An RNA of 177 nucleotides, treated with 2A3 and DMS and read out base by base. As a SHAPE reagent, 2A3 marks flexible, mostly unpaired nucleotides at the ribose 2'-OH.
RNA sequence: GGGAACGACUCGAGUAGAGUCGAAAAUCAUCGACCAGUCCUUCGAUCUGACAGACAAGGAUGGCAAGGAUGUGUGGAGGGAACAAGAACAAGUACGAGUACACGCUGCAGGGGUGGAAAGCCUUUGGAUAAAGACCAUGUUCGCAUGGUCUUUAUCAAAAGAAACAACAACAACAAC
Reactivity to 2A3 in 0.01 (KOAc 150mM, MgCl2 10mM, bicine 150mM(pH8.5), 24C), signal-to-noise 3, nucleotides 027 to 126: u050c000a000u020c030g080a080c040c020a070g270u060c020c000u060u060c070g200a280u020c040u100g150a130c080a090g020a020c010a040a000g040g000a030u020g030g000c050a040a030g130g010a000u020g060u010g030u050g030g080a120g030g000g030a060a050c050a110a070g040a060a010c040a120a010g030u030a070c020g020a010g010u020a040c060a010c080g050c030u030g030c070a050g000g050g000g030u080g020g020a050a020a020g020c030c000u030u040u050g080
Reactivity to DMS in 0.01 (KOAc 150mM, MgCl2 10mM, bicine 150mM(pH8.5), 24C), signal-to-noise 6, nucleotides 027 to 126: u010c040a060u000c050g020a120c030c020a060g020u010c010c000u000u010c120g000a110u000c030u020g030a110c280a100g000a090c130a030a060g000g010a130u000g000g020c110a110a130g010g010a020u000g000u010g010u000g000g000a110g000g010g000a080a070c110a060a080g000a070a090c080a060a070g020u010a070c080g010a100g010u010a090c080a070c080g000c060u000g010c060a060g000g000g000g000u000g000g020a080a060a110g000c070c020u010u000u010g010
Annotation:
2A3 adducts were read by reverse transcription with SuperScript II with manganese. DMS adducts were read by reverse transcription with MarathonRT. The RNA was probed in 150 mM KOAc, 10 mM MgCl2 and 150 mM bicine (pH 8.5) at 24 C. Reactivities are given for positions 27 through 126.